[RMDB]
RNA sequence: GGGAACGACUCGAGUAGAGUCGAAAAGUUAUGCUCUCGCUGCCUAAUGGCGGUGCGGGAAACCCACUCUAAAGUCCUUAGGGUUAGCCCCUUAAGGCGGGGUUCGGAGGCACCUGGCAAGAGAAGCUGAAACUGUGCACAUUCGUGUGCACAGUAAGAUCACUUUAAUAUUCGUAUUAAAGUGAUCAAAAGAAACAACAACAACAAC
Reactivity to DMS in 0.01 (KOAc 150mM, MgCl2 10mM, bicine 150mM(pH8.5), 24C), signal-to-noise 2, nucleotides 027 to 156: g020u000u010a060u000g030c020u010c000u000c010g010c030u000g040c000c020u000a110a090u010g020g020c080g040g010u000g010c030g000g010g000a110a100a090c010c010c060a170c120u000c090u000a040a090a200g020u000c020c000u000u000a020g000g000g020u000u000a230g030c220c200c020c010u000u000a020a050g060g080c000g020g010g020g020u000u000c050g000g010a260g020g000c000a040c030c010u000g040g010c020a060a080g010a050g020a060a070g010c010u010g020a120a090a060c000u000g010u010g020c000a000c000a100u000u010c220g020u010g010u000g030c010a000c000a000g010u000a020a090
Reactivity to 2A3 in 0.01 (KOAc 150mM, MgCl2 10mM, bicine 150mM(pH8.5), 24C), signal-to-noise 4, nucleotides 027 to 156: g040u090u090a080u220g010c000u010c000u000c020g120c190u040g000c010c020u220a300a190u190g130g040c090g000g000u010g010c010g030g080g000a060a010a000c010c020c010a050c040u180c100u190a170a090a100g110u150c010c000u000u000a000g000g000g020u020u060a040g030c000c000c000c000u020u040a010a000g000g000c000g000g000g000g000u010u060c060g110g060a070g190g000c000a010c010c010u030g010g010c010a040a010g010a010g020a080a020g000c010u010g000a060a020a020c000u000g010u010g000c000a010c000a010u030u090c150g110u060g000u010g020c000a010c000a000g000u010a020a000
This 207-nucleotide RNA was probed chemically with DMS and 2A3. As a SHAPE reagent, 2A3 marks flexible, mostly unpaired nucleotides at the ribose 2'-OH. The DMS profile rests on 3,758 reads. Source: RMDB library M2RFPK, as collected in RNAgym. The RNA was probed in 150 mM KOAc, 10 mM MgCl2 and 150 mM bicine (pH 8.5) at 24 C. For 2A3 the reverse transcriptase was SuperScript II with manganese.